[RMDB]
RNA sequence: GGGAACGACUCGAGUAGAGUCGAAAAUCUCAGCCCCUCCACCUUGGGGUGCCCUAUUCGGAGCACUGCAGUUCCCGAUAGAAAGGCUAAGCACCUCGCAAUGACGUAAGGUGGGACUUUUCCCUAGCCUUUAGCUUUGGUUCGCCAAAGCUAAAGGAAAAGAAACAACAACAACAAC
Reactivity to DMS in 0.01 (KOAc 150mM, MgCl2 10mM, bicine 150mM(pH8.5), 24C), signal-to-noise 2, nucleotides 027 to 126: u020c030u010c020a220g020c030c030c000c030u000c050c040a060c080c070u000u050g010g000g000g000u000g000c020c110c010u010a090u000u010c300g010g000a040g000c020a080c180u000g010c220a180g020u010u000c030c000c050g000a050u040a070g020a060a060a090g020g020c230u010a070a180g000c020a030c040c000u010c040g000c090a050a100u040g020a130c210g000u000a020a020g040g000u010g000g040g000a030c040u010u000u000u000c010c010c040u000a140g010
Overview
Conditions: 150 mM KOAc, 10 mM MgCl2 and 150 mM bicine (pH 8.5), 24 C. The record gives the reactivity of an RNA of 177 nucleotides to DMS. For DMS the reverse transcriptase was MarathonRT. For DMS, 853 sequencing reads were counted. Values cover nucleotides 27 to 126. Source: RMDB library VIROID, as collected in RNAgym.